Chemical mapping of a 177-nucleotide RNA with 2A3 and DMS.
RNA sequence: GGGAACGACUCGAGUAGAGUCGAAAAGAUAUGGAAGUGGUGGCUAGAAACCGUUCGGAAACGAACGGGAUUUCUUGGACCCACCCACUUCCUAAGUCAAAGGUGACAUUGCUUCGGCAAUGUCACCGUCUAGCAGGGAGUUCGCUCCCUGCUAGACAAAAGAAACAACAACAACAAC
Reactivity to 2A3 in 0.01 (KOAc 150mM, MgCl2 10mM, bicine 150mM(pH8.5), 24C), signal-to-noise 2, nucleotides 027 to 126: g010a010u030a010u060g000g000a000a000g000u020g040g000u000g010g000c030u030a030g000a010a000a040c010c010g010u000u000c000g010g000a010a020a030c010g000a000a000c000g000g020g000a010u010u030u000c000u070u300g040g020a020c010c010c000a010c020c010c000a010c000u000u010c000c010u010a010a000g010u010c060a240a130a150g000g000u000g000a000c000a010u010u000g020c020u100u140c300g170g010c020a020a000u020g000u010c000a010c000c000
Reactivity to DMS in 0.01 (KOAc 150mM, MgCl2 10mM, bicine 150mM(pH8.5), 24C), signal-to-noise 3, nucleotides 027 to 126: g000a010u000a050u010g000g010a020a010g030u000g000g020u000g010g010c010u000a010g000a010a030a060c000c000g000u010u000c000g020g010a000a010a040c000g010a000a010c010g000g000g000a060u000u000u000c010u000u010g040g010a040c300c000c000a020c090c100c110a010c040u000u000c000c000u000a000a120g000u000c010a110a140a220g000g010u000g000a020c000a010u000u000g010c010u010u010c300g010g010c000a000a010u000g010u000c000a000c010c000
Conditions: 150 mM KOAc, 10 mM MgCl2 and 150 mM bicine (pH 8.5), 24 C. For DMS, 4,288 sequencing reads were counted. The data come from the RNA Mapping Database (RMDB), library TTRDES.